[RMDB]
RNA sequence: GGGAACGACUCGAGUAGAGUCGAAAAACAACAGAUAGCUGGAACCAGCGUAGAAUUCUACGCAUAUCCAUAGCGAAUGGUACCUGUAAAGAAAAUAAGUCUGGAUGUACAAGUACCAACAGCCGGGCAUGCCAUGGUGAUGUCAAUCACAUAUGCACGACCGCAAAAUGUUCGCAUUUUGCGGUCGAAAAGAAACAACAACAACAAC
Reactivity to 2A3 in 0.01 (KOAc 150mM, MgCl2 10mM, bicine 150mM(pH8.5), 24C), signal-to-noise 1, nucleotides 027 to 156: a000c080a030a060c040a050g240a090u100a000g020c020u030g010g010a100a140c050c060a020g070c000g000u030a000g050a300a230u300u050c010u000a000c020g000c050a040u100a070u030c000c000a030u100a090g030c020g080a000a090u020g020g000u030a020c000c040u000g000u060a000a090a090g200a060a060a120a010u180a090a000g150u050c030u040g040g020a040u000g020u050a020c000a040a040g000u000a050c030c030a000a000c000a070g000c020c010g000g010g000c040a050u010g100c000c010a010u020g060g070u030g000a000u000g080u120c060a040a040u020c000a010c010a080u150a000u080g030c040a040
About this RNA
Chemical mapping of a 207-nucleotide RNA with 2A3. Source: RMDB library OK3TST, as collected in RNAgym. As a SHAPE reagent, 2A3 marks flexible, mostly unpaired nucleotides at the ribose 2'-OH.